[RMDB]
RNA sequence: GGGAACGACUCGAGUAGAGUCGAAAACUUGACCAGUCUUCUCGCCUAUUUGCCACGAAUACUGCGUCGUCAGGAUACACCCAUAGGCUUGUUAUGUCUGGAUUUGGACUCCUUGGCGGGUAGCAAACCAUGCUCCUUGUUUCGACAAGGAGCAUGGAAAAGAAACAACAACAACAAC
Reactivity to 2A3 in 0.01 (KOAc 150mM, MgCl2 10mM, bicine 150mM(pH8.5), 24C), signal-to-noise 2, nucleotides 027 to 126: c020u080u090g060a030c050c010a000g020u000c020u010u000c010u010c000g000c000c010u040a060u070u100u080g050c010c000a030c010g070a020a090u020a140c020u050g000c020g090u030c010g050u040c040a000g000g010a020u070a090c050a010c020c000c000a040u090a080g000g000c030u050u040g160u230u230a130u270g030u010c030u040g010g040a030u110u010u060g000g000a000c010u000c010c000u020u010g040g020c020g020g000g000u020a030g000c030a000a030a000
Reactivity to DMS in 0.01 (KOAc 150mM, MgCl2 10mM, bicine 150mM(pH8.5), 24C), signal-to-noise 2, nucleotides 027 to 126: c030u000u030g000a110c060c030a140g000u000c010u000u000c000u000c170g030c030c040u040a070u020u030u040g020c000c040a050c090g020a110a070u010a140c070u000g000c060g000u030c060g000u000c030a050g000g000a090u010a100c130a110c000c030c040a090u000a020g000g030c030u010u010g000u000u030a060u000g010u000c000u000g010g000a190u010u020u020g010g000a140c070u000c040c010u030u020g030g000c060g000g030g010u000a080g010c090a020a020a130
An RNA of 177 nucleotides, treated with 2A3 and DMS and read out base by base. The 2A3 profile rests on 2,062 reads. Conditions: 150 mM KOAc, 10 mM MgCl2 and 150 mM bicine (pH 8.5), 24 C. In probing experiments dimethyl sulfate is read out at A N1 and C N3, which are open when not base-paired. For 2A3 the reverse transcriptase was SuperScript II with manganese. The DMS profile rests on 2,800 reads.